Chemical mapping of a 177-nucleotide RNA with DMS and 2A3. For DMS the reverse transcriptase was MarathonRT. The 2A3 profile rests on 7,335 reads. Values cover nucleotides 27 to 126.
[RMDB]
RNA sequence: GGGAACGACUCGAGUAGAGUCGAAAACCUUGGUCCUUCGGGACCAAGGAAACCCGAAGACAUACAGACUGUGGGCGGCGAGACAAUCCACUAGAGUCGCUAAAAGCGUCUGGUUCGCCAGACGCAAGCAAUAGAAUAACUUCGGUUAUUCUAUUGCAAAAGAAACAACAACAACAAC
Reactivity to DMS in 0.01 (KOAc 150mM, MgCl2 10mM, bicine 150mM(pH8.5), 24C), signal-to-noise 4, nucleotides 027 to 126: c000c010u010u000g000g000u000c010c000u000u020c220g020g030g020a020c010c000a000a010g010g000a010a050a080c000c010c010g000a060a080g010a110c110a100u010a090c150a080g000a070c070u000g030u000g010g000g010c230g020g000c090g010a080g000a090c110a070a130u010c040c030a060c050u010a120g000a120g010u000c020g010c150u020a050a070a120a150g000c000g010u000c000u000g000g010u000u000c170g010c000c000a000g000a010c000g000c000a020a030
Reactivity to 2A3 in 0.01 (KOAc 150mM, MgCl2 10mM, bicine 150mM(pH8.5), 24C), signal-to-noise 4, nucleotides 027 to 126: c000c000u000u000g000g000u010c010c010u040u040c220g120g000g010a010c010c000a000a000g000g000a060a010a000c010c000c010g040a040a020g090a040c050a030u300a060c050a040g120a050c040u070g010u080g090g030g020c070g030g010c050g020a040g030a070c050a020a070u020c020c010a010c000u040a070g030a010g160u020c010g020c050u050a030a070a090a100g000c000g000u000c000u010g000g050u030u040c240g030c020c010a000g000a000c000g000c000a000a000